[RMDB]
RNA sequence: GGGAACGACUCGAGUAGAGUCGAAAAAGCUGAGAAGAGAGAAGCAGCAGACCGUUUAAGGAAACCUUCUUCUACGUUUACAUCCUCAAUCUCUGUAGCAAGACGACUUGUAUCAACACGUUCACUGUACUCAAGAUACCAGCCACGUUUAUCCUCAGUUAUAUCAGUCGUUCGCGACUGAUAUAACAAAAGAAACAACAACAACAAC
Reactivity to 2A3 in 0.01 (KOAc 150mM, MgCl2 10mM, bicine 150mM(pH8.5), 24C), signal-to-noise 4, nucleotides 027 to 156: a000g010c050u020g030a010g000a110a030g040a040g020a000g020a100a010g040c030a010g000c000a020g040a050c010c020g040u070u120u220a100a050g000g010a040a040a060c010c000u010u050c000u000u000c020u040a060c030g000u010u040u070a080c070a080u120c010c030u090c010a080a150u040c050u000c020u070g080u080a020g050c050a060a000g040a040c020g020a040c010u020u060g000u000a040u050c030a020a060c040a020c140g070u140u090c050a080c130u070g060u150a050c010u040c110a020a050g010a030u030a050c000c010a010g060c040c030a100c050g000u050u080u050a050u040c010c010u030c030a000
Reactivity to DMS in 0.01 (KOAc 150mM, MgCl2 10mM, bicine 150mM(pH8.5), 24C), signal-to-noise 3, nucleotides 027 to 156: a120g010c090u010g010a090g020a080a080g010a190g020a100g000a120a120g030c070a080g020c030a110g000a200c030c040g030u000u000u000a090a140g020g010a090a080a110c070c020u000u010c020u030u010c020u000a080c040g050u000u000u010a060c050a130u000c020c000u000c060a080a100u010c010u000c040u010g010u000a120g010c070a040a110g010a110c020g000a060c050u010u030g040u040a080u000c020a060a050c050a040c070g020u020u000c060a060c040u010g020u000a090c050u000c010a060a110g010a080u000a010c030c040a060g020c000c010a050c080g010u000u000u000a170u000c050c000u000c030a300